[RMDB]
RNA sequence: GGGAACGACUCGAGUAGAGUCGAAAAGGAAACAAGUCAAGUAACUGCUGCAAUCAGUUUAAUAUCAGUGACGUCCUCUAUCCGAGGACAAUAUAUUAAAUGGAUAAAAGGAGCAGGAGAAAAAAAAGGUAUCAAACUAGUUCGCUAGUUUGAUACCAAAAGAAACAACAACAACAAC
Reactivity to 2A3 in 0.01 (KOAc 150mM, MgCl2 10mM, bicine 150mM(pH8.5), 24C), signal-to-noise 1, nucleotides 027 to 126: g070g070a100a050a130c160a160a000g140u150c070a030a010g010u030a130a050c000u000g000c010u090g090c050a000a040u010c020a040g010u010u000u050a000a010u020a000u040c090a020g120u010g180a040c070g020u000c020c020u000c000u100a110u110c080c080g010a010g000g000a000c000a010a020u050a010u010a000u030u000a030a000a000u020g000g010a040u070a230a200a030a060g040g010a020g080c000a010g110g010a070g050a070a110a080a000a000a000a000a010
Reactivity to DMS in 0.01 (KOAc 150mM, MgCl2 10mM, bicine 150mM(pH8.5), 24C), signal-to-noise 1, nucleotides 027 to 126: g020g000a030a100a140c180a030a070g010u000c060a090a120g010u000a130a130c000u000g010c030u010g010c020a170a040u020c010a040g000u000u000u000a010a000u000a020u000c110a120g000u000g010a180c200g000u000c000c000u000c000u000a040u040c300c180g010a000g000g000a000c000a040a060u000a020u000a000u000u000a030a020a010u000g000g000a020u040a080a050a100a110g040g000a050g000c010a000g000g020a080g020a020a000a000a040a070a040a100a180